Overview
Structure probing data (DMS) for a 207-nucleotide construct.

RNA sequence: GGGAACGACUCGAGUAGAGUCGAAAAGAAAUUCCCGAUCGGCGGUAAAGUCCGCGAGCCCAACGAAAAAGGUUUGGCAGGAACCGGUGAGAUUCCGGUACCGACAGUAUAGUCUGGAUGGAAGAAGGUAGCCUCCUCUCGUUCGCGAGAGGAGGAAUCCUAAGAAGCUGUUCGCAGCUUCUUAGGAAAAAGAAACAACAACAACAAC
Reactivity to DMS in 0.01 (KOAc 150mM, MgCl2 10mM, bicine 150mM(pH8.5), 24C), signal-to-noise 1, nucleotides 027 to 156: g040a100a100a170u000u000c010c000c020g020a080u020c010g000g000c000g000g000u010a160a150a080g030u000c000c000g010c000g010a300g030c010c000c030a060a120c060g010a070a150a180a210a120g000g010u010u000u000g020g040c000a110g000g010a090a020c000c000g000g020u000g010a250g000a300u000u000c000c000g000g020u000a010c010c010g010a060c050a110g000u000a160u000a060g000u000c030u010g020g000a080u000g000g000a060a070g010a150a060g010g010u000a150g010c000c010u020c000c010u010c000u000c020g030u000u000c300g030c000g000a010g010a030g030g010a000g010g000a010a000

The RNA was probed in 150 mM KOAc, 10 mM MgCl2 and 150 mM bicine (pH 8.5) at 24 C.